[RMDB]
RNA sequence: GGGAACGACUCGAGUAGAGUCGAAAAGAUAUGGAAAGAGUGGUACACGCCUGACGUUUGACGUCGGAAACGACCGAGUCAGGAACUACGUGCGCUUUCCUAAGUCAAACUCAUCUUCGGAUGAGAAGACACAUGUAAACUUCGGUUUACAUGUGUCAAAAGAAACAACAACAACAAC
Reactivity to 2A3 in 0.01 (KOAc 150mM, MgCl2 10mM, bicine 150mM(pH8.5), 24C), signal-to-noise 4, nucleotides 027 to 126: g010a030u040a020u060g010g020a020a000a010g060a060g240u300g060g050u220a090c040a010c080g070c010c010u010g040a030c040g050u060u240u290g110a100c130g000u020c010g020g020a070a070a010c010g000a010c020c050g000a050g030u000c000a000g020g020a010a020c040u190a000c050g080u080g030c020g000c010u010u000u000c000c000u020a040a000g020u010c010a030a010a150c010u000c010a000u000c010u060u080c280g150g000a010u000g010a010g010a030a020
Reactivity to DMS in 0.01 (KOAc 150mM, MgCl2 10mM, bicine 150mM(pH8.5), 24C), signal-to-noise 4, nucleotides 027 to 126: g010a030u000a300u010g000g010a030a000a000g000a040g020u010g020g000u010a040c120a140c300g010c000c000u000g020a020c000g020u000u000u010g020a080c300g000u000c020g000g000a070a060a100c020g020a030c020c030g000a080g010u000c010a020g020g000a050a030c170u000a070c010g020u000g020c030g000c000u010u000u000c000c000u010a050a100g010u010c050a090a120a190c000u000c010a020u000c000u000u020c150g020g000a010u010g000a010g000a090a110

Conditions: 150 mM KOAc, 10 mM MgCl2 and 150 mM bicine (pH 8.5), 24 C. This 177-nucleotide RNA was probed chemically with 2A3 and DMS. Reactivities are given for positions 27 through 126. 2A3 adducts were read by reverse transcription with SuperScript II with manganese. The data come from the RNA Mapping Database (RMDB), library TTRDEL.